Structure probing data (DMS and 2A3) for a 207-nucleotide construct. The DMS profile rests on 2,142 reads. The reactions ran in a buffer of 150 mM KOAc, 10 mM MgCl2 and 150 mM bicine (pH 8.5), at 24 C.
RNA sequence: GGGAACGACUCGAGUAGAGUCGAAAAUUGCUGUCAAUCCAGUCGACGGUGGUACUAAGAUUAUCACCAACCCAAACCAGCGUUUGACCGUUCGUGACUUAUUGGCACCAGGUGAUACUGAAGCAAGUGCAGUACAUUAUUUACGCGAACUGCUAUACCCGGUUUUAUAGUUCGCUAUAAAACCGGGAAAAGAAACAACAACAACAAC
Reactivity to DMS in 0.01 (KOAc 150mM, MgCl2 10mM, bicine 150mM(pH8.5), 24C), signal-to-noise 2, nucleotides 027 to 156: u010u010g020c010u000g060u000c050a130a270u010c080c020a050g000u000c020g020a060c120g040g040u000g030g110u000a070c100u000a100a060g000a170u000u000a010u000c010a070c070c070a090a110c020c020c020a070a080a100c040c020a140g010c110g010u000u000u000g020a040c080c020g000u010u010c060g000u010g020a060c020u000u000a200u010u010g010g010c050a000c010c040a070g030g020u000g020a160u010a160c040u000g000a110a200g000c020a140a070g030u000g010c020a060g010u010a090c050a110u000u010a140u010u000u000a110c090g000c040g010a050a090c010u000g010c010u020a180u000a210
Reactivity to 2A3 in 0.01 (KOAc 150mM, MgCl2 10mM, bicine 150mM(pH8.5), 24C), signal-to-noise 3, nucleotides 027 to 156: u120u100g020c000u000g060u060c040a020a040u010c020c140a030g040u070c050g030a080c080g020g000u000g010g000u010a020c060u140a140a170g010a290u140u050a010u030c000a000c030c010a050a070c020c010c000a030a050a010c040c030a010g030c050g050u020u070u120g090a060c030c000g000u000u030c030g030u050g070a060c020u040u080a060u090u070g030g030c010a010c020c010a060g000g050u060g080a090u050a120c050u040g040a080a000g050c050a080a060g030u020g060c030a030g050u090a040c020a050u100u180a080u130u280u070a050c070g000c010g040a020a010c000u050g000c010u050a020u070a100